Source: RMDB library RFMREP, as collected in RNAgym. This 177-nucleotide RNA was probed chemically with DMS. The reactions ran in a buffer of 150 mM KOAc, 10 mM MgCl2 and 150 mM bicine (pH 8.5), at 24 C. For DMS, 989 sequencing reads were counted.
[RMDB]
RNA sequence: GGGAACGACUCGAGUAGAGUCGAAAAGAAAGAGAAGGAGACAAGAAUUGCGUUGGCUUCGGCGAGCGACGAAAUGGUUUAAAUACAGGCUACGAGUUCUCCUCGUAGGGUCUCUUGCCUCCGGCAAAGAUCGGUUACUUUUCGAAGUAACCGAUCUAAAAGAAACAACAACAACAAC
Reactivity to DMS in 0.01 (KOAc 150mM, MgCl2 10mM, bicine 150mM(pH8.5), 24C), signal-to-noise 1, nucleotides 027 to 126: g010a140a040a060g000a110g030a190a130g010g010a030g000a020c010a010a040g000a050a040u000u000g010c010g000u000u010g000g010c020u000u000c230g020g030c010g000a160g020c020g000a020c020g010a010a020a140u010g000g000u000u000u000a060a060a040u000a020c030a070g010g010c010u010a000c000g000a010g010u000u000c300u000c040c000u000c010g010u000a000g000g000g000u000c000u000c000u000u000g010c030c000u000c020c000g000g000c200a080a050